The record gives the reactivity of an RNA of 207 nucleotides to DMS and 2A3. For 2A3, 1,710 sequencing reads were counted. The reactions ran in a buffer of 150 mM KOAc, 10 mM MgCl2 and 150 mM bicine (pH 8.5), at 24 C.
RNA sequence: GGGAACGACUCGAGUAGAGUCGAAAAAGUUUCUCCAAAACGACAGUCUAUUUUACUCCCUUCUUAGGACUGUCUUGAACCUUCCUAGUGCUACAGGAGGGUGCCGAAAGUUCAUGUGGUUUCAUACACAGGGAAACUGAGACCUAGCAGGAGGAAAUCGUAAAUAGCGUUUCGACGCUAUUUACGAAAAAGAAACAACAACAACAAC
Reactivity to DMS in 0.01 (KOAc 150mM, MgCl2 10mM, bicine 150mM(pH8.5), 24C), signal-to-noise 2, nucleotides 027 to 156: a050g020u000u000u000c020u000c010c020a110a040a070a080c030g000a020c020a010g010u010c000u010a080u010u000u000u000a060c050u010c020c010c020u000u000c030u010u010a080g010g010a020c010u020g000u000c010u000u000g020a070a060c030c000u000u010c000c020u010a080g020u000g000c170u010a150c100a060g040g010a040g010g020g000u000g010c070c080g010a110a100a040g010u000u000c050a050u000g030u010g010g010u000u000u010c140a140u010a080c070a030c050a120g000g020g010a040a090a090c050u010g010a160g010a040c030c000u000a130g070c110a130g020g010a060g020g000a040a090a140
Reactivity to 2A3 in 0.01 (KOAc 150mM, MgCl2 10mM, bicine 150mM(pH8.5), 24C), signal-to-noise 3, nucleotides 027 to 156: a000g050u020u020u000c040u020c020c000a100a070a030a010c030g010a000c000a000g000u000c010u050a210u060u080u050u040a060c030u070c010c010c000u070u050c030u060u090a040g000g060a010c000u000g000u020c000u000u080g010a000a000c000c000u000u010c000c000u040a070g040u100g270c050u120a100c050a050g000g010a000g010g010g000u010g040c010c020g190a140a070a020g040u080u060c020a050u110g030u050g080g000u080u240u170c050a060u190a190c010a010c020a060g170g020g000a000a050a030c030u040g000a000g020a060c010c010u040a050g000c030a010g030g020a020g000g020a020a070a040